[RMDB]
RNA sequence: GGGAACGACUCGAGUAGAGUCGAAAAAACAGGAUAAACCUAUCACCGCCGCUGAGUUGCUGGAACCUUGUUCUGGCGAGCGCACUGAAGCAGGGAUGCGGGCCAAUAUCAGAGUCGCGGUGCAGUAGAGUCAUGCCAUAUUCGUAUGGCAUGACUCAAAAGAAACAACAACAACAAC
Reactivity to 2A3 in 0.01 (KOAc 150mM, MgCl2 10mM, bicine 150mM(pH8.5), 24C), signal-to-noise 1, nucleotides 027 to 126: a020a000c150a120g040g000a120u160a090a070a030c030c000u040a040u150c000a000c000c000g000c000c020g010c010u060g040a010g030u080u040g060c010u070g040g000a080a060c030c150u150u160g000u120u000c010u000g000g040c100g060a110g070c130g010c060a090c070u110g090a110a030g070c040a020g060g020g030a000u060g070c000g020g030g030c060c030a090a040u190a110u080c020a010g000a050g170u190c070g050c030g010g030u040g080c040a060g010u140a060
Reactivity to DMS in 0.01 (KOAc 150mM, MgCl2 10mM, bicine 150mM(pH8.5), 24C), signal-to-noise 1, nucleotides 027 to 126: a110a050c140a070g010g000a170u000a090a040a130c030c000u000a070u030c010a030c030c000g000c020c180g000c000u000g000a030g000u000u000g000c030u020g000g010a020a070c020c160u010u020g030u000u010c000u000g010g000c000g000a060g020c120g070c060a040c070u000g000a110a060g050c020a050g010g010g010a100u020g000c030g000g000g020c060c100a100a030u000a080u010c030a030g010a110g000u000c190g050c010g000g000u000g010c150a070g030u000a120